[RMDB]
RNA sequence: GGGAACGACUCGAGUAGAGUCGAAAAACCUUUGUGGACAGCGCCAAUAAACAUCGAUCAUAAGGAAAUACGGAUGCCCAUUGGGCAUCCCACUCCUUAUGGGAGUUUAAAAAUGCUGUCCACUCUGGUAAAACCGCGUCCCUUCGGGGACGCGGAACGUACUUCAAGGGUUCGCCCUUGAAGUACGAAAAGAAACAACAACAACAAC
Reactivity to 2A3 in 0.01 (KOAc 150mM, MgCl2 10mM, bicine 150mM(pH8.5), 24C), signal-to-noise 1, nucleotides 027 to 156: a000c040c000u000u010u020g010u000g000g000a000c000a000g000c000g000c000c000a010a020u020a000a000a040c070a300u240c080g100a080u120c010a010u000a000a000g010g030a070a140a030u120a090c060g000g000a000u000g020c040c010c070a300u280u300g050g010g000c010a000u000c000c000c000a000c000u010c000c000u000u000a000u000g000g010g000a030g000u000u000u030a010a030a000a030a020u030g000c000u020g000u000c000c000a000c000u000c000u000g020g000u020a030a050a030a050c000c000g020c000g000u000c070c050c000u000u020c290g060g000g000g000a000c020g000c000g000g000a010a010